[RMDB]
This 177-nucleotide RNA was probed chemically with DMS and 2A3. The reactions ran in a buffer of 150 mM KOAc, 10 mM MgCl2 and 150 mM bicine (pH 8.5), at 24 C. For DMS the reverse transcriptase was MarathonRT.
RNA sequence: GGGAACGACUCGAGUAGAGUCGAAAAGUCUUGCCCGAUAACCCGGUGCUUGGAUCGAAGUUGACUCUGACUGCCACCGUGCAGCUGGCCGGCUUGGGGCCCGAUGAGGUGACGGUGCAAGCGGUGAUGGAGUGGGAUUAUUCGUAAUCCCACUCCAAAAAGAAACAACAACAACAAC
Reactivity to DMS in 0.01 (KOAc 150mM, MgCl2 10mM, bicine 150mM(pH8.5), 24C), signal-to-noise 3, nucleotides 027 to 126: g000u000c010u000u010g020c010c000c010g010a070u030a280a070c020c000c010g000g020u010g030c120u010u000g020g030a080u010c080g000a050a030g010u000u010g010a040c010u020c230u000g000a130c030u000g020c020c020a120c230c200g000u010g030c000a010g020c010u000g000g010c040c000g010g010c010u000u000g020g030g000g000c010c020c030g000a100u010g030a160g000g000u000g000a170c030g020g000u000g020c020a010a020g010c020g030g000u010g010a170
Reactivity to 2A3 in 0.01 (KOAc 150mM, MgCl2 10mM, bicine 150mM(pH8.5), 24C), signal-to-noise 1, nucleotides 027 to 126: g090u000c020u000u000g040c020c020c000g010a070u160a190a030c050c000c000g030g070u270g030c070u070u190g100g090a210u170c040g110a040a020g040u030u060g040a010c020u040c050u140g130a300c000u010g050c040c020a300c250c110g000u160g020c000a000g000c030u010g010g020c040c020g020g050c000u020u020g070g000g000g040c040c040c000g020a110u150g070a020g040g020u040g030a000c000g000g060u210g000c000a000a030g020c000g060g180u160g030a090